[RMDB]
RNA sequence: GGGAACGACUCGAGUAGAGUCGAAAACAGAUAAGAAAAGACCGAGAGGUUCAAGUUUAUAGGGCAGAAAGCGGGGGACAGCAGUACUAAACAUUCCCUGUGGCUGAGACGAAGGUAGUACUCCAACAAAACGAGUACUAGUUCGCUAGUACUCGAACAAAGCGCAUAUGUUCGCAUAUGCGCUUUGAAAAGAAACAACAACAACAAC
Reactivity to 2A3 in 0.01 (KOAc 150mM, MgCl2 10mM, bicine 150mM(pH8.5), 24C), signal-to-noise 1, nucleotides 027 to 156: c020a000g100a070u160a210a020g060a090a110a000a010g040a040c000c080g020a010g000a020g150g030u100u120c070a040a000g000u000u080u020a140u140a040g000g030g000c020a020g050a130a070a000g030c020g000g000g010g010g000a020c000a020g050c000a000g000u040a040c000u090a020a140a020c010a030u070u050c020c000c000u060g040u060g060g010c000u020g000a000g000a080c080g000a040a000g070g000u020a010g000u000a020c030u040c060c050a050a040c000a040a110a070a010c030g000a000g020u020a000c000u000a010g040u020u070c090g000c100u000a000g010u000a000c000u040c000g000a000a000
Reactivity to DMS in 0.01 (KOAc 150mM, MgCl2 10mM, bicine 150mM(pH8.5), 24C), signal-to-noise 1, nucleotides 027 to 156: c070a120g000a200u000a100a100g000a090a050a100a030g000a050c040c020g000a210g030a180g020g000u010u010c040a110a070g030u000u010u000a080u000a140g000g010g030c030a080g020a050a030a080g020c040g000g020g020g090g000a080c080a040g010c040a050g030u000a190c050u000a040a060a060c070a090u010u000c000c000c000u000g020u010g010g000c010u000g000a190g000a070c110g000a150a070g010g020u000a030g050u000a070c030u040c010c020a070a110c140a020a060a030a170c010g000a080g030u000a010c000u000a010g000u000u000c260g030c000u000a000g020u010a000c000u000c000g000a040a070
Source: RMDB library M2RFPK, as collected in RNAgym. Structure probing data (2A3 and DMS) for a 207-nucleotide construct. The DMS profile rests on 1,979 reads. Conditions: 150 mM KOAc, 10 mM MgCl2 and 150 mM bicine (pH 8.5), 24 C.